[RMDB]
RNA sequence: GGGAACGACUCGAGUAGAGUCGAAAAUGCGGGCACUCAUCGAGCAGACGCUUCGGAUCGAAGGAUAUUGCGAGUCGUGCGGGAAGACCUUCCGUCAGGUGUCCGACAUCAUCCGAUCGGUGGUGGCGCUGUGACCGCGAUCGAGGUGAAGCACCCGCUUGACAUUGCAGUUCGCUGCAAUGUCAAGAAAAGAAACAACAACAACAAC
Reactivity to 2A3 in 0.01 (KOAc 150mM, MgCl2 10mM, bicine 150mM(pH8.5), 24C), signal-to-noise 1, nucleotides 027 to 156: u030g000c000g050g000g000c000a000c050u160c010a110u050c080g000a020g060c010a040g030a060c120g120c120u140u050c050g010g160a230u130c100g000a050a000g040g030a000u090a070u100u280g030c000g000a000g080u060c030g060u120g050c020g000g050g000a110a060g030a060c030c000u000u000c000c030g030u000c060a040g000g010u000g010u000c000c030g070a090c000a040u020c000a000u000c000c000g000a020u000c010g120g070u140g040g000u020g100g000c160g020c140u120g100u100g100a020c000c000g030c000g020a000u000c010g000a020g010g000u000g000a030a000g000c020a060c000c000c000g040